[RMDB]
RNA sequence: GGGAACGACUCGAGUAGAGUCGAAAACUGGCCUGUGUGGAAGUACGUGAGUACUUCACUCUCUACGGGAGUAGAGACACACAGAUCGUGGAGCGAUGUCAUGGAACUACUCCCGUAGUUCACGUAUGACUCACGUCAUACCAUGACGCCAGCCACGCAUUAAAUACGCUUUCGAGCGUAUUUAAUGAAAAGAAACAACAACAACAAC
Reactivity to DMS in 0.01 (KOAc 150mM, MgCl2 10mM, bicine 150mM(pH8.5), 24C), signal-to-noise 4, nucleotides 027 to 156: c020u000g010g010c020c000u020g050u000g020u000g010g010a090a080g020u010a010c000g010u030g010a300g040u000a030c060u000u000c050a110c080u010c050u000c000u000a010c000g010g010g000a220g030u000a010g000a080g030a300c000a020c010a040c010a040g000a030u000c020g010u000g030g010a220g020c020g020a070u000g020u010c020a050u000g010g010a080a170c010u000a020c010u010c080c060c090g030u000a020g010u000u000c040a110c110g000u010a070u010g010a070c000u000c110a060c130g010u000c020a070u000a070c020c020a020u000g000a030c020g000c010c010a050g020c010c030a060c060g000
Reactivity to 2A3 in 0.01 (KOAc 150mM, MgCl2 10mM, bicine 150mM(pH8.5), 24C), signal-to-noise 7, nucleotides 027 to 156: c000u000g000g000c010c010u030g010u010g000u000g030g050a070a040g020u100a010c010g010u030g030a010g000u120a220c010u080u100c020a050c020u130c000u010c000u000a000c000g000g000g010a010g000u000a000g000a000g040a010c000a000c000a000c000a010g020a010u020c020g020u090g140g110a120g110c020g010a010u010g000u010c010a010u010g010g020a020a030c000u010a000c000u010c010c020c010g000u000a010g000u060u130c140a120c120g070u120a050u120g010a010c000u000c030a010c020g000u000c000a010u030a080c000c000a000u000g000a000c010g000c010c000a000g000c000c000a040c030g030
Chemical mapping of a 207-nucleotide RNA with DMS and 2A3. The DMS profile rests on 12,811 reads. High 2A3 reactivity points to a flexible backbone, as in loops and unpaired stretches. Source: RMDB library OK3TST, as collected in RNAgym. Reactivities are given for positions 27 through 156.